[RMDB]
RNA sequence: GGGAACGACUCGAGUAGAGUCGAAAAGAAUCGCAGUUCGCUGCGAUUCAAAUAAAAUCAGCGGUAAGGAGGCGUAAAAUAUUACCGCAGAACGCCUCCUUAAAACUACGUCCUUCGGGACGUAGAACUGUGUCUAGAUGUUCGCAUCUAGACACAGAAAAGAAACAACAACAACAAC
Reactivity to 2A3 in 0.01 (KOAc 150mM, MgCl2 10mM, bicine 150mM(pH8.5), 24C), signal-to-noise 1, nucleotides 027 to 126: g000a000a000u000c000g000c000a000g000u010u080c150g080c090u010g040c010g000a000u000u000c000a000a010a000u110a000a040a000a040u080c020a010g040c020g060g040u030a010a000g030g040a000g020g000c010g010u050a010a060a060a150u190a060u130u150a040c010c010g020c010a010g070a060a010c010g000c000c000u000c000c000u000u020a000a010a000a020c000u020a020c000g000u000c010c000u020u030c150g080g020g000a000c000g000u010a000g000a000a030
Reactivity to DMS in 0.01 (KOAc 150mM, MgCl2 10mM, bicine 150mM(pH8.5), 24C), signal-to-noise 1, nucleotides 027 to 126: g000a030a020u000c000g000c000a000g010u000u000c290g030c000u020g030c000g000a000u000u000c010a000a050a040u000a030a050a130a110u010c140a090g000c060g030g000u010a030a040g000g000a010g000g000c030g030u000a060a070a040a110u000a020u000u030a190c040c060g010c130a060g000a090a030c030g010c010c000u000c000c000u000u000a010a060a090a090c000u000a000c010g000u020c000c000u000u010c160g000g010g000a040c000g020u030a000g000a080a130

Record summary:
Structure probing data (2A3 and DMS) for a 177-nucleotide construct. Reactivities are given for positions 27 through 126. The RNA was probed in 150 mM KOAc, 10 mM MgCl2 and 150 mM bicine (pH 8.5) at 24 C.